[RMDB]
RNA sequence: GGGAACGACUCGAGUAGAGUCGAAAAGAAAGAAAGAAACGGCGAUGAUGAUGAAACAAGAUUACCAUCAAACUUUGAGAGGUUUUUCGCUCGUUGAUGUAAACUUCUUUUUAUAAUCUGAGCCUAAUGAGGGGGAUGACUUCGGUCAUCCCCCUCAAAAAGAAACAACAACAACAAC
Reactivity to 2A3 in 0.01 (KOAc 150mM, MgCl2 10mM, bicine 150mM(pH8.5), 24C), signal-to-noise 1, nucleotides 027 to 126: g070a000a120a000g140a020a220a000g070a020a160a000c030g000g000c000g010a010u030g000a000u000g000a000u070g020a100a000a000c030a030a000g050a040u000u010a160c100c060a000u020c020a000a000a100c100u170u300u300g000a000g000a030g100g180u110u030u050u090u200c110g000c000u000c050g000u000u000g000a000u030g000u220a160a120a120c000u000u000c000u030u000u000u000u000a120u000a030a030u010c010u030g080a000g040c000c000u040a070a070